[RMDB]
RNA sequence: GGGAACGACUCGAGUAGAGUCGAAAAAAAAGAUAUGGAUAACUAUCAACUUUCGACAGGAACUACACUAAACAGUCGGAAACGACUGUUAGGUGCCUGUGGUGACCACGGUUAUCCUAAGUCAAAAGUGGUAGAACUAGUUCGCUAGUUCUACCACAAAAGAAACAACAACAACAAC
Reactivity to DMS in 0.01 (KOAc 150mM, MgCl2 10mM, bicine 150mM(pH8.5), 24C), signal-to-noise 1, nucleotides 027 to 126: a050a050a050a100g020a030u000a010u030g010g010a000u000a000a000c010u030a110u000c060a070a110c300u010u020u000c000g000a050c010a000g020g000a110a030c090u010a300c000a000c000u010a260a020a000c000a000g000u000c020g030g010a020a020a100c000g060a000c000u000g000u010u000a100g030g000u000g010c010c000u000g000u020g000g060u020g000a120c250c140a050c170g000g010u000u000a000u000c000c010u000a010a070g000u000c010a100a100a080a060
Reactivity to 2A3 in 0.01 (KOAc 150mM, MgCl2 10mM, bicine 150mM(pH8.5), 24C), signal-to-noise 1, nucleotides 027 to 126: a000a030a020a000g040a000u030a000u000g010g000a010u010a000a000c020u040a070u300c050a050a250c150u270u300u240c070g030a000c050a070g000g040a050a030c160u270a060c300a010c050u000a050a120a000c020a000g050u000c000g000g000a000a000a000c000g020a010c020u000g000u000u030a060g010g000u010g020c010c010u000g020u000g020g080u170g150a030c080c080a110c180g030g010u000u000a000u010c000c000u020a020a010g010u030c000a030a000a090a150
An RNA of 177 nucleotides, treated with DMS and 2A3 and read out base by base. High 2A3 reactivity points to a flexible backbone, as in loops and unpaired stretches. 2A3 adducts were read by reverse transcription with SuperScript II with manganese.